This 207-nucleotide RNA was probed chemically with DMS and 2A3. The 2A3 profile rests on 1,855 reads. The data come from the RNA Mapping Database (RMDB), library OK3TST.

RNA sequence: GGGAACGACUCGAGUAGAGUCGAAAAACCCCAGAAGACUCCGGGUCGUAGGUCGCCAGGAAACAAGACAUCUGGGGAGACAUUACGGCUUUCGCCCACUAUUACCAAUGCCCAGCUCAUGAAGGCGAAGCGAUCUGUACCAGCAUUGCGUAACGUACUCACCAAACUAAUUCGUUAGUUUGGUGAGAAAAGAAACAACAACAACAAC
Reactivity to DMS in 0.01 (KOAc 150mM, MgCl2 10mM, bicine 150mM(pH8.5), 24C), signal-to-noise 1, nucleotides 027 to 156: a080c040c000c000c020a090g000a100a080g040a300c010u000c040c070g010g080g000u010c070g090u000a090g050g000u000c020g040c010c050a140g050g010a090a070a100c040a090a080g020a110c070a160u000c020u030g040g050g030g000a140g020a080c050a090u010u000a030c030g030g010c040u000u010u000c030g000c050c020c010a120c110u010a120u000u010a060c040c040a000a100u000g020c010c020c010a170g010c100u010c070a130u000g010a110a070g010g010c030g040a140a120g030c030g010a030u000c050u020g000u000a090c030c070a020g000c090a070u000u000g010c020g000u010a030a080c100g010u010a200
Reactivity to 2A3 in 0.01 (KOAc 150mM, MgCl2 10mM, bicine 150mM(pH8.5), 24C), signal-to-noise 4, nucleotides 027 to 156: a000c040c010c000c000a050g050a140a020g050a160c080u030c150c100g030g020g010u060c050g010u060a040g080g040u040c020g040c050c000a020g040g000a070a130a050c050a070a050g100a060c030a060u010c020u020g000g020g110g000a080g010a020c070a070u100u180a020c030g010g000c000u130u140u150c060g030c000c040c020a090c040u200a180u110u100a050c050c000a050a020u050g030c010c020c010a010g020c030u040c040a130u170g080a110a040g050g000c020g050a040a010g020c030g050a070u070c050u160g080u120a100c040c020a020g000c000a020u030u070g020c050g070u050a080a040c030g020u080a070